[RMDB]
Structure probing data (DMS) for a 177-nucleotide construct.
For DMS the reverse transcriptase was MarathonRT.
The reactions ran in a buffer of 150 mM KOAc, 10 mM MgCl2 and 150 mM bicine (pH 8.5), at 24 C.
RNA sequence: GGGAACGACUCGAGUAGAGUCGAAAAGAUAUGGAAUGGUAGGGAGCGUGUCGGAAACGAUGAACGCGAAGAACUACCCAUUCCUAAGUCAAAGAGACGGGCAAUAGUUCGCUAUUGCCCGUCUCAAGGUAUAGGCUUUGUUCGCAAAGCCUAUACCAAAAGAAACAACAACAACAAC
Reactivity to DMS in 0.01 (KOAc 150mM, MgCl2 10mM, bicine 150mM(pH8.5), 24C), signal-to-noise 2, nucleotides 027 to 126: g010a060u000a300u000g000g000a030a030u000g000g000u000a010g000g000g000a050g040c000g020u000g020u000c000g000g000a090a110a140c030g000a020u000g000a130a030c000g000c010g000a070a130g010a100a110c010u000a000c160c030c040a020u010u010c010c000u000a050a070g000u000c040a050a130a180g000a000g000a000c030g040g000g000c020a000a000u000a000g020u000u050c290g020c000u000a010u000u000g000c020c000c010g010u000c000u000c020a010a020